[RMDB]
RNA sequence: GGGAACGACUCGAGUAGAGUCGAAAAUGGAAGUAGCCGUGCUCCAGAACGCGUGCAUCCUUGUGGCCAAGCCGCCGUAUUUGCUUAUCCCUCAGCCGGAACUCGCGCCACAGCAUCUGGAUGUGCAAGCCCGUGAUUUAUUCGUAAAUCACGGGCUAAAAGAAACAACAACAACAAC
Reactivity to DMS in 0.01 (KOAc 150mM, MgCl2 10mM, bicine 150mM(pH8.5), 24C), signal-to-noise 2, nucleotides 027 to 126: u050g020g000a070a020g000u000a060g000c020c030g030u040g020c000u000c000c000a040g000a060a200c090g040c100g030u000g080c020a020u000c000c000u010u020g010u010g000g020c040c020a060a180g010c060c070g020c010c000g050u010a090u030u010u030g010c020u000u070a160u010c070c030c000u000c070a070g000c070c070g000g000a180a020c040u000c100g000c090g000c000c060a070c020a040g040c150a070u040c220u030g020g000a080u000g000u000g000c000a090
Reactivity to 2A3 in 0.01 (KOAc 150mM, MgCl2 10mM, bicine 150mM(pH8.5), 24C), signal-to-noise 3, nucleotides 027 to 126: u100g040g010a060a030g050u080a010g040c020c060g050u050g010c020u020c040c030a070g080a180a070c060g050c030g090u020g020c010a010u000c000c000u030u020g050u040g010g000c000c000a040a020g020c040c060g070c060c010g050u050a150u050u140u100g030c020u070u090a050u170c030c000c000u030c020a030g020c010c010g030g020a020a050c040u020c090g030c040g000c040c010a040c000a040g020c020a090u040c060u100g020g050a040u030g010u030g000c020a000